[RMDB]
RNA sequence: GGGAACGACUCGAGUAGAGUCGAAAACAGACAGGAACAUUCAUUAGAGGUGGCGUUGAUCAAAGAGUAGCAAUUGACAUGGGAACGCGACUAUGGUCAACAGGCAAUGAAAUGUCGCGAACUAUUAAAUGCACUACUGUUUCGACAGUAGUGCAUUAAAAGAAACAACAACAACAAC
Reactivity to DMS in 0.01 (KOAc 150mM, MgCl2 10mM, bicine 150mM(pH8.5), 24C), signal-to-noise 3, nucleotides 027 to 126: c090a090g010a070c090a070g000g000a070a090c050a060u000u000c060a090u010u020a110g020a100g000g010u010g000g000c090g030u000u000g010a040u000c090a050a110a110g030a050g030u000a040g010c050a070a100u000u010g000a090c130a080u010g000g000g010a080a160c090g030c010g000a020c040u000a090u010g020g010u000c010a060a050c100a090g000g020c080a040a100u010g010a060a040a070u020g000u000c020g000c040g000a040a110c090u010a070u010u010a050
Reactivity to 2A3 in 0.01 (KOAc 150mM, MgCl2 10mM, bicine 150mM(pH8.5), 24C), signal-to-noise 2, nucleotides 027 to 126: c020a000g100a030c030a000g090g060a050a000c010a050u000u120c010a020u060u170a090g010a020g030g090u020g030g000c020g040u030u050g030a060u040c030a040a150a030g130a040g000u060a030g000c030a050a040u000u100g060a050c030a050u090g090g000g000a110a060c030g000c000g000a000c000u080a040u170g060g000u000c000a020a060c060a120g070g040c040a040a000u030g040a080a050a040u090g020u010c010g030c030g040a040a040c000u000a020u220u110a080